[RMDB]
RNA sequence: GGGAACGACUCGAGUAGAGUCGAAAAGACGGAAAAGAUCGAACCUAAGAAGAUCAGGGAGUGUUAGCCGAAUCCUAGGGCUCCUAGGGACGCAUCGUCUGAUGCGAAAUAAACACUAACGUCGAAAAAUAGGACUACCUUUCGAGGUAGUCCUAUUAAAAGAAACAACAACAACAAC
Reactivity to 2A3 in 0.01 (KOAc 150mM, MgCl2 10mM, bicine 150mM(pH8.5), 24C), signal-to-noise 4, nucleotides 027 to 126: g010a000c030g020g040a070a080a020a080g010a010u000c030g010a070a100c030c030u070a090a050g100a060a000g010a020u010c030a020g050g060g020a040g010u060g100u120u080a020g090c080c070g070a100a060u080c000c000u010a020g010g060g140c050u120c030c000u010a000g000g030g000a000c000g000c020a000u000c000g300u080c260u300g000a000u000g000c000g010a000a050a000u090a020a060a000c010a010c010u030a080a030c020g010u010c010g060a030a030a030
Reactivity to DMS in 0.01 (KOAc 150mM, MgCl2 10mM, bicine 150mM(pH8.5), 24C), signal-to-noise 6, nucleotides 027 to 126: g000a020c000g000g000a110a060a090a110g000a020u000c000g010a090a160c100c120u030a110a100g020a160a170g000a040u000c030a140g020g010g020a030g020u010g010u000u000a060g020c160c150g010a080a110u020c030c010u000a030g000g000g020c130u020c030c000u000a010g000g030g010a220c020g020c020a010u000c000g000u020c220u040g000a010u010g010c000g000a050a040a110u020a090a030a030c020a010c020u000a090a140c020g000u020c020g010a050a040a040